Conditions: 150 mM KOAc, 10 mM MgCl2 and 150 mM bicine (pH 8.5), 24 C. Structure probing data (2A3 and DMS) for a 177-nucleotide construct. Source: RMDB library OK2TRN, as collected in RNAgym.
RNA sequence: GGGAACGACUCGAGUAGAGUCGAAAAGUGAUCAUAACCACGCUGGAGGAAUUAGGGCCGGCAGAGCCAACAACUGACCAAAUAAUGCGCUUUGAUGCGGCAAUGUCAGAAGAUACGCAGGGACUGGCCAAGAGGGAAUUUUCGAAUUCCCUCUUGGAAAAGAAACAACAACAACAAC
Reactivity to 2A3 in 0.01 (KOAc 150mM, MgCl2 10mM, bicine 150mM(pH8.5), 24C), signal-to-noise 2, nucleotides 027 to 126: g030u000g010a050u080c040a090u070a130a080c020c010a010c070g000c040u030g050g050a020g030g020a120a070u060u050a210g040g060g000c020c030g030g020c040a030g020a010g050c010c010a050a020c020a010a050c050u040g030a030c020c040a060a040a090u190a090a100u130g050c070g010c080u120u220u170g150a150u200g020c020g020g000c060a010a040u070g010u020c010a010g030a060a000g020a110u100a080c070g010c040a020g060g010g020a050c030u040g020g000
Reactivity to DMS in 0.01 (KOAc 150mM, MgCl2 10mM, bicine 150mM(pH8.5), 24C), signal-to-noise 4, nucleotides 027 to 126: g030u000g010a130u000c060a100u000a080a140c050c050a090c110g020c060u010g000g000a080g010g000a040a070u010u000a100g010g020g020c020c030g030g010c060a070g000a110g000c030c030a050a100c100a070a140c040u010g010a060c030c110a060a060a120u000a090a110u010g010c030g010c020u000u010u000g010a070u010g020c050g000g020c040a060a060u000g000u000c030a040g000a040a090g010a080u000a050c130g010c030a020g000g010g000a130c060u010g010g000